[RMDB]
RNA sequence: GGGAACGACUCGAGUAGAGUCGAAAAGAUAUGGAGCAGCUUUUGACGUUCUUGUUUCGGAAACGAAACGAGAACGAUAAGCUGCCUCCUAAGUCAAAAGUGCACCUAAGUUCGCUUAGGUGCACAACAGAAUGGUAAAGUUCGCUUUACCAUUCUGAAAAGAAACAACAACAACAAC
Reactivity to DMS in 0.01 (KOAc 150mM, MgCl2 10mM, bicine 150mM(pH8.5), 24C), signal-to-noise 8, nucleotides 027 to 126: g000a040u000a300u000g000g010a050g000c000a010g010c000u000u000u000u010g020a200c110g010u000u000c000u000u000g010u000u000u000c000g010g010a100a060a170c000g000a000a010a000c000g010a000g010a000a010c000g010a030u000a010a010g010c000u000g000c140c010u000c000c000u000a030a140g000u000c030a080a070a100a130g020u000g000c000a000c000c000u000a010a010g000u000u010c240g010c000u000u000a000g000g010u000g000c000a000c000a010a090
Reactivity to 2A3 in 0.01 (KOAc 150mM, MgCl2 10mM, bicine 150mM(pH8.5), 24C), signal-to-noise 8, nucleotides 027 to 126: g020a010u060a030u140g000g000a000g010c000a000g000c010u120u100u180u260g300a190c080g000u000u010c000u010u010g000u000u000u000c000g020g000a040a050a050c010g000a000a000a000c000g000a010g000a000a000c000g000a000u000a010a000g000c000u000g010c010c000u000c000c000u010a060a030g040u020c020a020a030a100a130g000u000g000c000a000c000c000u000a010a010g000u040u120c260g040c190u000u000a000g000g000u000g000c000a000c000a000a000